[RMDB]
RNA sequence: GGGAACGACUCGAGUAGAGUCGAAAACAAAUACAUAGACUGGUUCUGGUUGUGUCUGUGAUAUCAGGAUGAGAAUUAAACAGACUGUGUUUAUAAUAGUUUUGUCAUCAGGACAGUUAUAAGCAAGAUUAAUCUGAUUGACUAAGCGUGUAGAUAUUACAAAUAGAUUCUUCGGAAUCUAUUUGUAAAAAGAAACAACAACAACAAC
Reactivity to DMS in 0.01 (KOAc 150mM, MgCl2 10mM, bicine 150mM(pH8.5), 24C), signal-to-noise 2, nucleotides 027 to 156: c050a100a100a140u000a110c040a070u000a110g000a100c010u000g010g020u000u010c030u010g040g030u010u000g030u020g020u000c010u000g000u000g020a230u000a030u000c050a080g020g010a150u000g000a190g000a110a120u000u000a100a140a090c000a040g020a050c020u010g030u000g030u000u010u000a040u010a020a030u000a140g040u000u000u000u000g020u000c090a170u000c090a080g000g010a010c000a180g020u000u000a050u000a000a050g010c020a030a100g010a140u000u000a070a040u000c020u020g000a160u010u000g000a060c040u000a050a090g020c040g010u000g000u000a070g000a090u000a170u000
Reactivity to 2A3 in 0.01 (KOAc 150mM, MgCl2 10mM, bicine 150mM(pH8.5), 24C), signal-to-noise 4, nucleotides 027 to 156: c030a000a110a020u190a070c050a030u150a050g110a090c050u070g090g010u060u070c020u020g050g000u050u050g030u000g020u000c020u000g030u030g030a020u020a010u130c060a050g090g010a070u150g050a030g080a100a080u160u150a080a120a030c010a010g040a000c030u030g020u000g010u090u070u010a050u000a070a100u080a080g030u010u010u030u060g020u010c020a050u030c030a010g000g070a030c020a040g030u060u030a070u030a090a020g060c040a050a030g020a170u070u120a040a020u030c010u020g020a050u100u120g010a020c010u030a050a010g010c020g020u030g010u030a010g020a100u100a030u140